[RMDB]
RNA sequence: GGGAACGACUCGAGUAGAGUCGAAAAGGACAACGCUUCGGCGUUGUCCAAACCCUCAACCUCAGAGCGCAAGAGUCGAACGAAUACAGUUCGACAUGAGGAAAAUCUCCCUCUUCGGAGGGAGAAAUCAAAUUCCCUAGUUCGCUAGGGAAUUUGAAAAAGAAACAACAACAACAAC
Reactivity to DMS in 0.01 (KOAc 150mM, MgCl2 10mM, bicine 150mM(pH8.5), 24C), signal-to-noise 2, nucleotides 027 to 126: g000g010a020c010a000a000c000g060c020u010u010c180g020g060c000g020u000u000g000u020c000c000a020a020a080c030c010c000u030c100a110a070c000c000u020c030a050g000a070g000c130g030c240a120a110g010a160g000u000c010g000a010a010c000g030a120a120u020a090c170a090g000u000u000c000g010a000c000a000u020g000a000g000g000a130a040a070a230u010c000u000c000c010c000u000c010u000u020c160g020g010a000g010g010g010a010g000a010a020a100
Reactivity to 2A3 in 0.01 (KOAc 150mM, MgCl2 10mM, bicine 150mM(pH8.5), 24C), signal-to-noise 1, nucleotides 027 to 126: g000g010a010c010a000a000c010g000c020u040u070c190g120g070c000g010u000u000g030u030c000c000a020a010a000c000c000c010u010c030a090a130c000c000u020c000a030g010a050g070c040g050c110a190a020g050a040g110u000c000g000a000a020c020g050a100a030u300a200c110a060g020u000u010c020g000a010c000a000u000g010a000g000g000a070a010a000a000u020c000u020c010c010c000u020c000u040u040c140g020g030a000g000g000g010a010g000a000a000a010